This 207-nucleotide RNA was probed chemically with 2A3. Values cover nucleotides 27 to 156.
RNA sequence: GGGAACGACUCGAGUAGAGUCGAAAAGCGUACUACGUAUGGACCUUAGCUUGGAUUUAGCGAUGUAGGUGGCUCCCAAAUAGGAGCCACCGCAGAUAUCGCUUGUCAGCUAAGCCAUACGUAUCGCAAAAGCAAUUCUCCUUCGGGAGAAUUGCAACCAGUUUAGGAUCUUCGGAUCCUAAACUGGAAAAGAAACAACAACAACAAC
Reactivity to 2A3 in 0.01 (KOAc 150mM, MgCl2 10mM, bicine 150mM(pH8.5), 24C), signal-to-noise 2, nucleotides 027 to 156: g000c020g030u130a090c030u020a000c010g030u010a000u020g000g000a060c060c000u000u000a000g040c000u130u240g190g000a050u300u290u130a000g000c000g000a000u020g030u070a160g010g000u000g000g000c000u130c050c020c010a280a300a050u300a070g000g000a010g000c000c000a000c000c000g010c000a000g000a020u040a000u030c000g010c010u000u000g010u000c000a000g000c010u000a000a000g000c000c000a000u000a000c000g010u000a000u060c000g000c010a060a020a000a070g000c000a000a010u000u010c000u000c000c010u030u130c190g130g000g000a000g000a000a000u000u000g000c000a000a020

Source: RMDB library RNAMAK, as collected in RNAgym.